[RMDB]
RNA sequence: GGGAACGACUCGAGUAGAGUCGAAAAGAAGUCCGACACGCUGUCGCGGGGCGAUUUAGCACCUUUCCCGGGAAAGGUCCCGGAGCGAUUUAGGCACAUUUAUUAGAUCAGUGCCGAUCUAAAGAAACACUAUCAGUGAUUUCGAUCACUGAUAGUGAAAAGAAACAACAACAACAAC
Reactivity to 2A3 in 0.01 (KOAc 150mM, MgCl2 10mM, bicine 150mM(pH8.5), 24C), signal-to-noise 6, nucleotides 027 to 126: g080a060a000g060u040c020c010g020a030c040a010c070g050c040u080g030u200c050g000c030g140g000g000g000c030g000a010u070u090u190a080g010c040a120c010c000u020u080u070c020c020c000g040g020g010a100a100a020g090g040u010c000c000c000g020g000a030g020c040g000a030u050u040u230a060g010g090c010a010c010a040u180u220u180a230u080u130a080g030a100u080c060a020g070u040g180c040c030g010a010u010c010u030a060a060a020g080a030a070a000
Reactivity to DMS in 0.01 (KOAc 150mM, MgCl2 10mM, bicine 150mM(pH8.5), 24C), signal-to-noise 8, nucleotides 027 to 126: g010a100a090g010u010c030c020g010a160c240a090c070g010c040u010g010u010c060g010c030g010g010g010g010c040g010a110u010u000u000a100g020c080a170c020c020u000u000u010c040c020c040g010g000g000a060a090a120g010g010u000c000c010c010g020g010a090g010c090g000a070u000u000u000a130g010g000c020a070c110a100u000u000u000a110u020u000a050g000a040u010c070a090g010u010g010c110c060g000a020u000c010u010a030a050a150g000a150a090a140